RNA sequence: GGGAACGACUCGAGUAGAGUCGAAAAAGAAGUCAUAUUAAAUCGACUAUACAUGAUAGAUUAGGUAUUCCGACAGGGGCUUGUGAUGCACCACAAAUUGUUGAUGAUAAGUCACAAAUCGAAUUAAGAAAUUGUACAGGUUCGCCUGUACAAUUUCAAAAGAAACAACAACAACAAC
Reactivity to DMS in 0.01 (KOAc 150mM, MgCl2 10mM, bicine 150mM(pH8.5), 24C), signal-to-noise 1, nucleotides 027 to 126: a120g000a170a080g000u000c040a050u020a120u010u010a060a210a100u010c050g010a000c050u010a110u000a080c020a080u000g010a130u000a150g010a110u000u000a050g020g040u000a170u000u000c000c000g010a050c090a040g000g010g000g020c140u000u000g020u000g010a070u020g010c030a000c040c000a030c040a090a080a090u020u000g010u010u000g020a020u000g010a060u030a060a190g020u000c030a020c050a040a010a060u000c120g000a070a050u000u000a020a170